The record gives the reactivity of an RNA of 177 nucleotides to DMS and 2A3.
Source: RMDB library OK2TST, as collected in RNAgym.
Values cover nucleotides 27 to 126.
As a SHAPE reagent, 2A3 marks flexible, mostly unpaired nucleotides at the ribose 2'-OH.
RNA sequence: GGGAACGACUCGAGUAGAGUCGAAAACGCCUCGUAUCCUUUGACGCUUUCGACGUGCUGCGGCACCGUCUUGAGAUCGUCGUAGUUGAAUCGGAUCAGCAGCGUGCAGCCGGCCAGGGCGACCAGCGUGUUCCGUUACUUUCGAGUAACGGAACACAAAAGAAACAACAACAACAAC
Reactivity to DMS in 0.01 (KOAc 150mM, MgCl2 10mM, bicine 150mM(pH8.5), 24C), signal-to-noise 2, nucleotides 027 to 126: c110g000c030c030u000c100g010u000a070u000c040c010u000u000u030g010a010c040g000c140u000u000u000c060g010a030c000g020u020g030c030u000g000c140g040g000c030a080c090c120g020u000c040u000u020g010a050g010a040u000c000g020u000c030g000u020a030g000u010u000g000a110a130u010c040g000g000a050u010c080a110g010c070a090g020c080g010u020g020c110a070g000c030c000g010g010c060c040a090g010g000g040c050g000a050c020c020a140g010c120
Reactivity to 2A3 in 0.01 (KOAc 150mM, MgCl2 10mM, bicine 150mM(pH8.5), 24C), signal-to-noise 2, nucleotides 027 to 126: c020g060c010c000u050c010g100u100a180u160c010c000u070u040u200g030a000c000g000c030u050u060u060c010g030a030c010g000u020g000c010u050g000c070g060g030c010a000c020c150g000u050c000u030u160g020a020g010a050u080c020g010u000c010g000u040a060g030u040u080g060a120a070u070c020g000g080a060u060c010a040g060c030a010g020c040g110u090g020c030a030g040c030c030g050g000c010c050a040g050g030g020c040g030a050c000c020a040g030c060